[RMDB]
RNA sequence: GGGAACGACUCGAGUAGAGUCGAAAAAACAUGUAGUCGUAGCACUUUGUUCAUCGUAAAGUAUUACACCAUUACCAGAAGUAGUUCUAAACCACACCGCAUAAGUUACGGGAAAAUUAAACGUAUGGCUAGAUGAAGCAACUUGAGGUAACUCAACAGUGGGUAUGUUGUUCGCAACAUACCCACUAAAAGAAACAACAACAACAAC
Reactivity to 2A3 in 0.01 (KOAc 150mM, MgCl2 10mM, bicine 150mM(pH8.5), 24C), signal-to-noise 2, nucleotides 027 to 156: a000a000c140a080u120g040u080a050g020u050c070g030u060a010g000c060a020c080u070u070u100g020u060u020c080a050u160c060g120u160a030a000a000g030u000a070u090u090a030c000a030c040c050a020u000u130a050c030c030a030g000a140a000g060u120a000g010u070u100c120u120a080a020a060c020c000a030c000a010c020c010g010c050a060u080a150a070g030u060u030a020c010g000g000g120a010a010a010a010u190u100a020a110a000c050g030u090a020u060g060g000c000u010a010g000a120u030g050a040a000g040c030a040a090c000u030u050g000a040g000g070u050a070a060c020u000c020a000a020c010